[RMDB]
RNA sequence: GGGAACGACUCGAGUAGAGUCGAAAACUCGGGUAUCGCGCAAAAUGCAAUUGGGUAGCCAAGGACGCGAGCGGUAGUAACGGUGCAGUGCAGUACGCUGCUCAUCGACUUUACGGUAACGAUUCAUGCGUAUUCCUCCUGCAUGACAUCACCCCACCCCUAGCUGUGAUUUCGAUCACAGCUAGGGAAAAGAAACAACAACAACAAC
Reactivity to 2A3 in 0.01 (KOAc 150mM, MgCl2 10mM, bicine 150mM(pH8.5), 24C), signal-to-noise 2, nucleotides 027 to 156: c040u050c010g000g090g010u130a060u070c030g000c010g020c070a010a040a150a090u220g030c020a080a180u100u170g000g000g050u150a120g070c020c000a020a010g090g010a040c070g070c020g040a010g030c010g090g000u060a040g010u020a300a020c090g070g030u020g020c080a040g020u030g070c070a010g030u040a070c130g010c000u000g010c020u010c070a050u030c020g030a030c000u110u070u080a040c030g110g010u060a140a040c050g020a030u030u020c010a000u050g010c020g030u030a200u120u010c030c020u000c000c010u020g000c010a020u020g000a020c060a010u070c000a040c000c020c000c000a080c000